[RMDB]
The record gives the reactivity of an RNA of 177 nucleotides to 2A3 and DMS.
It was measured as part of the RMDB libraries RFM100 and RFMREP.
2A3 adducts were read by reverse transcription with SuperScript II with manganese.
DMS (dimethyl sulfate) methylates the pairing face of unpaired adenines and cytosines.
RNA sequence: GGGAACGACUCGAGUAGAGUCGAAAAACUAUACCAUGCUUACGAGCAUGGUAUAGAGUCUGCUGUUGGAUGCGCUUGAUCGUGGCGCCCUUGGGCCCCACCACGAGCCCUACCACGCGGUAGGGAAACUAAAGGUAGAAUUCGUUCUACCUUUAGUAAAAGAAACAACAACAACAAC
Reactivity to 2A3 in 0.01 (KOAc 150mM, MgCl2 10mM, bicine 150mM(pH8.5), 24C), signal-to-noise 6, nucleotides 027 to 126: a000c000u000a000u000a000c000c000a010u000g000c010u090u050a080c250g060a010g000c000a000u000g000g000u000a000u000a000g000a010g010u010c030u050g050c030u040g040u120u060g050g050a090u100g020c030g020c050u060u080g040a090u110c040g060u080g030g000c000g030c000c000c000u030u140g020g010g010c010c060c010c010a030c010c000a040c030g040a030g060c010c000c010u010a020c000c010a130c180g140c100g020g000u000a000g000g000g000a070a020
Reactivity to DMS in 0.01 (KOAc 150mM, MgCl2 10mM, bicine 150mM(pH8.5), 24C), signal-to-noise 9, nucleotides 027 to 126: a130c000u000a000u000a000c000c000a010u000g000c000u000u010a130c200g020a040g010c000a000u000g000g010u000a000u000a000g000a120g010u010c070u000g010c040u000g010u000u000g000g000a080u010g000c300g000c040u010u010g000a120u000c070g000u000g000g000c230g000c010c020c030u010u010g020g020g000c020c060c030c150a120c020c030a030c060g000a060g010c000c000c000u000a020c000c000a140c300g020c200g000g010u000a000g000g000g000a020a030